[RMDB]
RNA sequence: GGGAACGACUCGAGUAGAGUCGAAAAGAUAUGGAUUUGUUUGUCGCAUACGCCGAGUCGGAAACGAUAUCGUAUGAACUACGAUGAUAAAUCCUAAGUCAAACGUCCACUCUUCGGAGUGGACGAAUCAUUACGUUCAGUUCGCUGAACGUAAUGAAAAAGAAACAACAACAACAAC
Reactivity to 2A3 in 0.01 (KOAc 150mM, MgCl2 10mM, bicine 150mM(pH8.5), 24C), signal-to-noise 6, nucleotides 027 to 126: g020a000u020a020u080g030g000a030u020u020u040g130u060u120u300g080u040c050g000c200a000u010a020c010g010c060c080g090a180g090u000c010g020g000a010a030a010c010g010a010u010a040u130c000g000u000a010u030g020a090a050c160u220a030c290g000a000u020g000a000u000a050a020a010u000c000c000u000a020a000g020u030c050a150a060a120c030g000u000c010c000a010c000u000c010u040u110c300g170g000a010g000u000g000g000a000c000g000a000a000
Reactivity to DMS in 0.01 (KOAc 150mM, MgCl2 10mM, bicine 150mM(pH8.5), 24C), signal-to-noise 6, nucleotides 027 to 126: g000a020u000a230u010g000g000a020u000u000u000g010u000u000u010g050u000c020g020c020a040u000a030c020g020c300c110g010a110g030u010c000g000g000a080a030a110c020g020a030u000a050u000c010g010u010a010u010g010a120a110c170u010a300c010g010a000u010g020a020u000a010a010a010u000c000c000u020a030a130g000u000c020a100a090a240c020g010u000c000c000a010c000u000c000u000u010c220g030g000a020g020u000g000g000a000c010g000a000a040